[RMDB]
RNA sequence: GGGAACGACUCGAGUAGAGUCGAAAAGAUAUGGAACCCUGAGGAGGCUGGGUGUAAGUCGGAAACGAUUGAGCCCAGCUACCCACCCUCUGGGUUCCUAAGUCAAACGUCAUGUUCGCAUGACGAAUCUACAGCAUAUGUUCGCAUAUGCUGUAGAAAAAGAAACAACAACAACAAC
Reactivity to 2A3 in 0.01 (KOAc 150mM, MgCl2 10mM, bicine 150mM(pH8.5), 24C), signal-to-noise 3, nucleotides 027 to 126: g010a020u060a050u130g010g000a000a010c020c010c000u010g010a000g010g010a010g000g050c010u010g000g030g000u060g070u170a070a040g030u010c000g030g000a060a050a040c010g010a000u030u060g020a020g010c000c010c000a000g000c000u000a010c000c010c010a040c010c000c000u000c000u010g020g000g010u000u000c000c000u000a010a000g030u010c030a120a050a100c020g010u000c000a000u010g040u050u100c300g020c160a010u000g000a000c000g010a010a150
Reactivity to DMS in 0.01 (KOAc 150mM, MgCl2 10mM, bicine 150mM(pH8.5), 24C), signal-to-noise 6, nucleotides 027 to 126: g000a050u000a300u010g000g000a020a010c000c000c000u010g000a020g000g020a100g020g000c020u000g010g010g010u000g010u010a260a090g010u000c000g000g010a120a110a180c000g010a010u000u000g010a300g000c000c010c000a000g000c010u000a010c030c050c120a300c050c000c000u000c000u000g000g010g010u010u010c000c010u000a000a030g000u000c020a100a110a240c020g000u000c000a010u000g000u000u010c200g010c000a010u000g010a010c000g000a060a080